The data come from the RNA Mapping Database (RMDB), library RSTRND. Structure probing data (DMS and 2A3) for a 207-nucleotide construct. The 2A3 profile rests on 1,175 reads.
RNA sequence: GGGAACGACUCGAGUAGAGUCGAAAAUGGCCUCAGUCGAUAGGGCUGAGAGACUGCGACACUGUCAAAUUGCCGGGAACUCCUGCUAAGCUGUUGAUACCGCUGACUCAGGGAAACCUUAGCUCAGCACCGAGGGGAAACUCACGGGUAUGGUAAGGAUUAGUUGUUUGUUCGCAAACAACUAAUCAAAAGAAACAACAACAACAAC
Reactivity to DMS in 0.01 (KOAc 150mM, MgCl2 10mM, bicine 150mM(pH8.5), 24C), signal-to-noise 1, nucleotides 027 to 156: u000g030g020c000c000u000c000a000g050u000c010g010a220u000a100g040g030g020c030u000g000a070g020a050g020a010c030u000g000c100g010a120c050a110c080u000g010u070c160a010a090a190u000u000g010c040c030g000g040g050a100a090c090u000c010c020u000g030c000u000a080a220g030c010u000g050u000u020g020a060u010a050c000c020g010c010u000g000a050c050u040c120a080g000g000g000a140a080a150c040c000u000u010a030g000c050u000c090a070g020c110a090c020c000g000a090g020g000g010g010a140a060a230c030u000c020a090c040g000g010g010u000a090u020g010g010u010a190a150g000
Reactivity to 2A3 in 0.01 (KOAc 150mM, MgCl2 10mM, bicine 150mM(pH8.5), 24C), signal-to-noise 1, nucleotides 027 to 156: u120g020g000c000c000u030c000a020g000u010c020g150a300u170a270g190g010g000c020u000g010a020g000a020g010a020c020u090g010c040g020a020c060a010c100u110g010u070c010a030a090a220u060u150g030c040c000g000g030g060a040a030c020u030c020c000u000g020c030u100a100a000g030c030u000g040u040u000g030a040u050a080c020c000g030c000u000g010a000c000u020c070a010g000g000g000a030a010a110c000c000u000u000a000g010c000u000c030a000g000c000a030c000c010g020a070g000g000g000g000a020a040a050c010u030c010a010c000g030g000g000u080a070u060g060g000u050a080a060g110